[RMDB]
Conditions: 150 mM KOAc, 10 mM MgCl2 and 150 mM bicine (pH 8.5), 24 C. This 177-nucleotide RNA was probed chemically with 2A3. 2A3 is a SHAPE reagent: it acylates the 2'-hydroxyl of flexible nucleotides of all four kinds. For 2A3, 1,521 sequencing reads were counted. 2A3 adducts were read by reverse transcription with SuperScript II with manganese.
RNA sequence: GGGAACGACUCGAGUAGAGUCGAAAAUCCACAUCUGUGUCUCUGCAACUCACACUCCUUGGAGCCGUGCAGAGCAAAAUGUCUAAUGCUGCUUCCACAAAUAUUUGAAGGCCACAAACACAUUUCCGAAACGCGAGUAUUUCGAUACUCGCGUUUCAAAAGAAACAACAACAACAAC
Reactivity to 2A3 in 0.01 (KOAc 150mM, MgCl2 10mM, bicine 150mM(pH8.5), 24C), signal-to-noise 4, nucleotides 027 to 126: u040c020c000a080c030a070u050c070u130g110u010g140u120c000u010c010u000g030c020a030a150c000u020c040a150c000a010c050u080c070c040u080u140g040g020a020g020c100c070g100u020g010c010a000g000a000g000c000a000a030a000a010u170g050u010c020u090a070a060u060g020c010u030g000c000u030u000c030c000a020c030a020a140a020u200a140u120u140u150g080a060a030g000g010c000c000a010c010a050a060a000c090a040c040a130u050u060u040c000c020